[RMDB]
RNA sequence: GGGAACGACUCGAGUAGAGUCGAAAAGUCAUUAUGUUCGCAUAAUGACAAAUAUAUGGGACUAUAUAAAACCUGAUAGCGGUCCAAGAUCAUGUAUCGGCAAAAACAGACGAUUCGUCGUCUGUAACUCUAUAUCUACUUUCGAGUAGAUAUAGAGAAAAGAAACAACAACAACAAC
Reactivity to DMS in 0.01 (KOAc 150mM, MgCl2 10mM, bicine 150mM(pH8.5), 24C), signal-to-noise 7, nucleotides 027 to 126: g010u000c000a010u000u000a010u000g010u000u010c190g030c000a000u000a000a010u000g010a010c010a040a090a050u010a050u010a050u000g010g010g010a060c030u000a090u010a070u000a090a070a100a210c040c030u000g000a070u010a080g010c110g020g000u000c010c020a090a080g010a050u010c060a090u000g020u010a040u000c030g000g010c240a050a040a070a090a020c000a010g000a020c010g010a030u000u010c200g020u000c000g010u000c000u000g010u000a020a080
Reactivity to 2A3 in 0.01 (KOAc 150mM, MgCl2 10mM, bicine 150mM(pH8.5), 24C), signal-to-noise 9, nucleotides 027 to 126: g000u000c010a010u000u010a000u010g020u030u070c220g000c100a000u000a000a010u010g000a010c000a000a090a000u090a000u010a060u060g060g000g020a010c030u010a010u010a020u040a240a140a050a070c010c020u040g090a110u080a070g140c080g020g010u000c020c010a020a030g040a050u110c070a080u180g100u180a030u080c030g070g010c090a070a070a030a080a020c000a000g010a010c010g000a000u020u060c190g040u000c000g000u000c050u000g000u000a000a010
Source: RMDB library M2PK50, as collected in RNAgym.
This 177-nucleotide RNA was probed chemically with DMS and 2A3.
The RNA was probed in 150 mM KOAc, 10 mM MgCl2 and 150 mM bicine (pH 8.5) at 24 C.
For DMS the reverse transcriptase was MarathonRT.